[RMDB]
RNA sequence: GGGAACGACUCGAGUAGAGUCGAAAAGAGUACAUAUGCCCAGCCUUACUGCCUCGGCUGGAUGCUUCGUGCAAAUGCUAUGUACGCCUACGUAUAUGUGCGUAGAUGCCUAUAUUUUCUCUCCUGAGAAAAUAUAGAUGCAUACAAAGAGGAUGCACGGUACUCGAGUAUUCGUACUCGAGUACCGAAAAGAAACAACAACAACAAC
Reactivity to 2A3 in 0.01 (KOAc 150mM, MgCl2 10mM, bicine 150mM(pH8.5), 24C), signal-to-noise 2, nucleotides 027 to 156: g090a020g000u010a010c000a010u050a030u210g000c080c010c000a000g000c000c000u120u150a210c100u170g050c010c050u020c010g000g000c000u000g010g000a000u080g010c010u050u180c130g180u150g000c020a040a040a140u220g020c000u000a000u000g010u000a010c030g070c020c010u030a010c020g030u070a120u030a020u280g130u040g080c010g010u010a040g020a120u040g000c000c000u000a010u000a000u000u020u000u000c000u000c000u040c040c260u240g000a010g000a000a000a000a000u000a000u000a000g010a010u160g010c000a000u060a070c060a020a190a020g050a020g030g010a030u070g060c030a000
Reactivity to DMS in 0.01 (KOAc 150mM, MgCl2 10mM, bicine 150mM(pH8.5), 24C), signal-to-noise 1, nucleotides 027 to 156: g020a100g020u010a050c030a040u010a030u010g000c020c010c030a080g010c010c010u000u010a020c090u010g050c000c010u010c080g000g000c000u010g040g020a140u000g000c040u010u000c280g010u010g060c030a070a160a160u000g040c000u010a040u000g020u000a030c010g020c050c000u000a020c080g040u000a020u000a060u010g090u000g000c010g040u000a010g020a050u000g020c000c000u000a030u000a000u000u000u000u000c010u000c000u010c300c230u000g020a070g000a010a000a040a010u000a000u010a000g000a100u020g020c010a010u000a080c120a090a160a050g030a110g060g010a200u000g000c040a100
Chemical mapping of a 207-nucleotide RNA with 2A3 and DMS.
The reactions ran in a buffer of 150 mM KOAc, 10 mM MgCl2 and 150 mM bicine (pH 8.5), at 24 C.
High 2A3 reactivity points to a flexible backbone, as in loops and unpaired stretches.
Reactivities are given for positions 27 through 156.
Source: RMDB library OK3TST, as collected in RNAgym.
For 2A3 the reverse transcriptase was SuperScript II with manganese.
The 2A3 profile rests on 1,095 reads.